[RMDB]
RNA sequence: GGGAACGACUCGAGUAGAGUCGAAAAGGCAUUUCCACCGGAGGGUGGCGCGGAGGCACGCUCUUUUCCGACACGACGGUGGUCACUCGGGUAACGCGCCAAUGGUACUGUCCCAUCUACAACGGCCGACUACACGACUGUUCGCAGUCGUGUAGUCAAAAGAAACAACAACAACAAC
Reactivity to 2A3 in 0.01 (KOAc 150mM, MgCl2 10mM, bicine 150mM(pH8.5), 24C), signal-to-noise 2, nucleotides 027 to 126: g010g010c040a080u080u080u080c010c000a020c000c010g020g050a080g060g170g030u070g000g020c050g020c030g050g020a000g010g000c070a020c120g080c040u070c000u120u080u020u040c050c030g000a020c000a020c110g100a020c000g060g050u070g060g000u040c000a020c040u030c030g040g050g030u040a110a060c030g000c020g000c030c010a000a030u080g010g020u030a070c040u070g050u030c020c000c000a030u060c040u110a060c040a100a070c030g040g000c020c040
Reactivity to DMS in 0.01 (KOAc 150mM, MgCl2 10mM, bicine 150mM(pH8.5), 24C), signal-to-noise 1, nucleotides 027 to 126: g010g010c120a070u000u000u000c040c020a120c010c050g000g030a110g010g000g060u000g000g010c110g070c110g020g000a120g000g000c080a050c180g000c060u000c030u000u000u000u000c050c030g010a080c030a040c100g070a100c050g030g010u010g000g000u000c030a070c100u010c000g000g010g010u000a020a070c040g000c160g000c000c010a040a060u000g020g020u000a060c080u000g000u000c040c020c000a050u010c230u000a070c160a070a080c090g000g000c180c060